[RMDB]
RNA sequence: GGGAACGACUCGAGUAGAGUCGAAAAAGCAGGCAUCGUUUGCAAUGUUCAUUUUAAACCUUUACAUUUAAUGACGGCAUUUAACGAUUUAGGCAGAGAUAAUGAUUUUUUACAGGCCAUGCAACGCGAUGAGGGGUUGAUUCGUCAACCCCUCAUCAAAAGAAACAACAACAACAAC
Reactivity to 2A3 in 0.01 (KOAc 150mM, MgCl2 10mM, bicine 150mM(pH8.5), 24C), signal-to-noise 1, nucleotides 027 to 126: a040g100c090a030g070g080c000a010u020c000g030u030u090u060g050c030a110a110u070g020u020u050c030a080u020u000u060u170a140a220a120c050c040u080u130u060a060c050a200u140u000u060a030a010u020g050a090c070g020g070c020a000u100u010u110a030a010c050g040a060u020u010u120a050g000g070c020a000g000a020g020a080u050a130a080u090g010a110u090u000u020u000u110u000a020c030a000g000g000c000c000a020u030g000c010a020a020c020g000c010
Reactivity to DMS in 0.01 (KOAc 150mM, MgCl2 10mM, bicine 150mM(pH8.5), 24C), signal-to-noise 2, nucleotides 027 to 126: a090g030c060a090g000g040c050a030u000c140g000u000u000u000g000c040a050a030u010g020u000u010c020a050u000u020u000u000a070a130a090c080c040u010u010u000a080c130a140u000u020u000a010a040u000g020a110c220g010g030c020a060u000u020u000a010a060c040g000a140u010u010u000a050g010g030c050a060g000a130g020a060u010a020a050u000g010a010u000u000u020u010u000u010a100c070a040g010g010c020c020a030u000g030c060a060a050c160g030c170

Chemical mapping of a 177-nucleotide RNA with 2A3 and DMS. The RNA was probed in 150 mM KOAc, 10 mM MgCl2 and 150 mM bicine (pH 8.5) at 24 C. In probing experiments dimethyl sulfate is read out at A N1 and C N3, which are open when not base-paired. 2A3 adducts were read by reverse transcription with SuperScript II with manganese.